[RMDB]
RNA sequence: GGGAACGACUCGAGUAGAGUCGAAAAGAUAUGGACGCUUUAAGGGAGAUCUUGAGGUAUCGGAAACGAUACUGAUCUUUGAUCUUAUGGCGUCCUAAGUCAAAACAGGGUACUUCGGUACCCUGAAGUGAACCAUUUUGUUCGCAAAAUGGUUCACAAAAGAAACAACAACAACAAC
Reactivity to 2A3 in 0.01 (KOAc 150mM, MgCl2 10mM, bicine 150mM(pH8.5), 24C), signal-to-noise 1, nucleotides 027 to 126: g070a000u070a010u090g000g000a010c000g000c050u010u010u010a030a010g030g050g100a110g040a050u020c050u130u300g270a240g160g070u000a000u040c000g050g000a070a020a030c000g050a000u000a010c070u020g010a000u000c020u180u200u140g080a070u000c000u000u000a000u050g010g000c000g000u000c000c000u000a000a000g010u040c020a000a000a000a140c010a000g000g000g010u010a000c010u080u050c240g120g010u030a000c020c050c000u020g000a030a000
Reactivity to DMS in 0.01 (KOAc 150mM, MgCl2 10mM, bicine 150mM(pH8.5), 24C), signal-to-noise 2, nucleotides 027 to 126: g000a030u010a300u000g010g000a010c000g040c000u000u000u000a010a000g030g000g010a300g000a020u000c050u000u010g050a300g040g000u000a000u010c000g000g010a160a080a270c000g000a000u000a010c000u000g000a080u000c000u000u010u020g010a300u000c000u000u000a050u010g000g020c000g000u000c000c000u000a000a080g030u000c050a150a050a100a220c000a000g010g010g020u030a000c000u000u000c230g010g050u010a000c000c000c000u000g020a020a030

This 177-nucleotide RNA was probed chemically with 2A3 and DMS.
The DMS profile rests on 1,635 reads.
For 2A3 the reverse transcriptase was SuperScript II with manganese.